[RMDB]
RNA sequence: GGGAACGACUCGAGUAGAGUCGAAAAGAUAUGGACGUAUCACGCUUUUGACGGUUCCAUAUCGGAAACGAUAUGAAGAACCGAUAAGCGUAUACGUCCUAAGUCAAAACUCUAGUUCGCUAGAGAACAUUAAUACCCAGUUCGCUGGGUAUUAAUGAAAAGAAACAACAACAACAAC
Reactivity to 2A3 in 0.01 (KOAc 150mM, MgCl2 10mM, bicine 150mM(pH8.5), 24C), signal-to-noise 2, nucleotides 027 to 126: g010a010u030a020u100g000g000a010c000g010u000a010u050c180a020c050g050c030u150u200u230u300g300a260c110g000g000u000u000c000c010a000u000a000u000c000g000g000a010a000a000c000g000a000u010a000u030g230a270a300g010a020a000c010c020g090a140u110a170a000g000c010g000u010a000u000a000c000g000u000c000c000u000a000a000g000u000c000a020a030a060a150c000u000c000u000a010g050u100u080c300g000c210u000a000g000a010g000a040a010
Reactivity to DMS in 0.01 (KOAc 150mM, MgCl2 10mM, bicine 150mM(pH8.5), 24C), signal-to-noise 7, nucleotides 027 to 126: g010a020u000a300u000g000g000a020c000g010u000a000u000c290a010c000g020c000u000u000u010u010g020a230c090g010g010u010u000c000c000a000u000a000u000c000g000g000a060a060a130c000g010a010u000a000u000g010a210a180g000a010a000c000c000g010a080u000a010a010g000c000g010u000a010u010a000c000g010u000c000c000u000a000a060g010u010c020a110a090a120a150c010u000c000u000a010g000u000u010c260g020c010u000a010g000a020g010a120a220